Overview
The record gives the reactivity of an RNA of 177 nucleotides to DMS. Conditions: 150 mM KOAc, 10 mM MgCl2 and 150 mM bicine (pH 8.5), 24 C. Source: RMDB library OK2TST, as collected in RNAgym.
RNA sequence: GGGAACGACUCGAGUAGAGUCGAAAAAGGCCAUCGCCCUUCUUCGUGCUGCCAGGGAAGUUUGGCCGGAGAACGAAGUGUUCGGUGCAAUUUCCGCUGCACCGGAAGACGAGCUGCUGCUCCUGCAUAUUAAUUUAAUAUUCGUAUUAAAUUAAUAAAAAGAAACAACAACAACAAC
Reactivity to DMS in 0.01 (KOAc 150mM, MgCl2 10mM, bicine 150mM(pH8.5), 24C), signal-to-noise 1, nucleotides 027 to 126: a100g000g000c030c030a050u000c100g040c040c030c040u000u010c030u000u000c030g010u010g020c040u010g040c030c050a070g020g020g000a070a110g010u000u000u000g010g010c000c060g000g000a080g000a080a070c080g000a100a120g010u000g010u010u000c020g010g040u000g000c000a010a080u010u020u000c150c180g000c120u000g000c000a000c010c000g010g010a010a090g010a060c020g000a110g000c020u000g010c060u000g010c070u010c020c030u000g010c110a140